[RMDB]
RNA sequence: GGGAACGACUCGAGUAGAGUCGAAAAAAAGUUGCGGUCAACUUAAUGUCUGGUAUAUCACAACAAUCGAACAUUUAAUUGAGUUGAUUAAAUAUUGUUCUUCAAAAUAUACGCGUUCAAAACUGCGACAUGCCUAAAGUUUCGACUUUAGGCAUGUAAAAGAAACAACAACAACAAC
Reactivity to 2A3 in 0.01 (KOAc 150mM, MgCl2 10mM, bicine 150mM(pH8.5), 24C), signal-to-noise 3, nucleotides 027 to 126: a000a010a000g020u010u030g050c030g020g010u020c010a020a000c020u050u070a030a000u040g030u050c060u080g020g040u060a080u040a000u230c120a040c030a210a070c020a040a120u070c040g040a040a010c010a030u100u160u220a150a060u100u110g050a040g070u040u050g050a010u000u070a030a260a000u160a040u060u060g000u020u030c000u180u150c050a110a120a030a000u140a040u040a060c010g000c010g040u030u040c060a100a070a100a090c050u130g000c000g020
Reactivity to DMS in 0.01 (KOAc 150mM, MgCl2 10mM, bicine 150mM(pH8.5), 24C), signal-to-noise 3, nucleotides 027 to 126: a080a020a030g010u010u000g030c180g020g000u010c010a010a030c030u000u010a040a030u010g020u000c060u010g000g000u000a070u010a050u000c190a120c220a090a100c180a060a030u020c060g010a040a040c030a100u010u010u000a100a060u010u000g010a090g010u000u000g000a020u000u000a030a070a090u000a070u010u000g000u000u010c010u000u020c050a080a030a070a060u010a080u010a100c040g010c030g000u000u010c200a050a080a050a060c090u000g010c040g000
Record summary
This 177-nucleotide RNA was probed chemically with 2A3 and DMS. For DMS, 2,322 sequencing reads were counted. For 2A3, 2,289 sequencing reads were counted. 2A3 adducts were read by reverse transcription with SuperScript II with manganese. The reactions ran in a buffer of 150 mM KOAc, 10 mM MgCl2 and 150 mM bicine (pH 8.5), at 24 C.